[RMDB]
RNA sequence: GGGAACGACUCGAGUAGAGUCGAAAAGCUGCGUGAAAUCUCGCUGUUUUCUUGGCUAACUUUCAGCGAGGUGAGGCAAGGCGGCAAAAAAAAGUUGGGAGCAGCAACGGCAAGCAAAAAAAAAGUUACAAGUUGCGAUGGUUCGCCAUCGCAACAACCUUAUAGCAACGUUCGCGUUGCUAUAAGGAAAAGAAACAACAACAACAAC
Reactivity to 2A3 in 0.01 (KOAc 150mM, MgCl2 10mM, bicine 150mM(pH8.5), 24C), signal-to-noise 3, nucleotides 027 to 156: g000c010u020g020c010g030u110g060a090a060a040u020c010u010c010g010c000u000g010u010u000u010u020c070u110u200g120g000c050u010a020a000c010u030u010u010c000a010g000c000g000a020g020g000u010g020a030g020g050c050a020a030g070g000c040g000g000c040a050a010a020a030a020a000a010a050g070u080u050g010g030g010a030g020c020a010g000c020a050a020c030g040g010c010a030a050g010c060a060a050a010a000a000a000a000a000a050g020u020u030a020c030a130a050g000u010u000g000c000g010a000u000g010g020u040u030c100g040c070c000a000u000c000g000c000a000a000c000a000a000

Description:
An RNA of 207 nucleotides, treated with 2A3 and read out base by base. 2A3 adducts were read by reverse transcription with SuperScript II with manganese. For 2A3, 3,007 sequencing reads were counted. Conditions: 150 mM KOAc, 10 mM MgCl2 and 150 mM bicine (pH 8.5), 24 C.